[RMDB]
Chemical mapping of a 207-nucleotide RNA with DMS and 2A3. Values are in units of 0.01, from 0 to 300, in steps of 10. Source: RMDB library OK3TST, as collected in RNAgym. The reactions ran in a buffer of 150 mM KOAc, 10 mM MgCl2 and 150 mM bicine (pH 8.5), at 24 C. For DMS the reverse transcriptase was MarathonRT.
RNA sequence: GGGAACGACUCGAGUAGAGUCGAAAAAUUGUACGCAGCGCUAUAGCCAAUGCUAAUACGUAUGCUAAUCAGUUGCGCACGACGUCGGUACAUGCCAGCACAUCACGCGGCUACGAUACUGCGAUGUCGUGCAGUCGUGGUUGUGCGGCGCAUUGGCGUAUCCAACCUUAUUCGUAAGGUUGGAUACAAAAGAAACAACAACAACAAC
Reactivity to DMS in 0.01 (KOAc 150mM, MgCl2 10mM, bicine 150mM(pH8.5), 24C), signal-to-noise 3, nucleotides 027 to 156: a080u000u010g010u000a060c060g000c000a070g010c030g020c070u010a190u000a080g040c000c020a080a050u000g010c020u000a130a190u000a050c090g010u000a070u010g020c000u000a080a270u000c080a090g010u000u000g020c060g000c010a070c020g030a030c030g000u000c040g010g040u000a030c050a060u000g020c000c000a120g020c000a070c080a100u000c100a120c070g000c000g010g020c010u000a000c020g020a110u000a040c030u000g030c100g000a300u000g030u000c000g020u000g030c000a000g010u000c020g010u000g000g010u000u010g020u000g020c030g040g000c110g000c010a030u000u000g010g010c070
Reactivity to 2A3 in 0.01 (KOAc 150mM, MgCl2 10mM, bicine 150mM(pH8.5), 24C), signal-to-noise 9, nucleotides 027 to 156: a000u140u100g020u020a020c030g000c050a020g020c030g010c080u120a070u090a190g000c000c010a040a010u030g010c030u140a160a150u120a180c090g030u060a060u280g020c030u070a050a080u110c050a070g060u070u080g050c020g000c050a010c020g070a010c010g040u050c030g030g000u060a040c020a030u130g000c000c000a040g020c010a040c000a060u080c020a020c130g000c000g000g000c020u030a040c040g050a070u000a030c030u160g210c100g160a240u040g010u010c010g010u020g020c000a000g000u000c000g010u010g020g020u030u030g000u010g000c000g010g000c010g000c010a020u010u080g030g000c010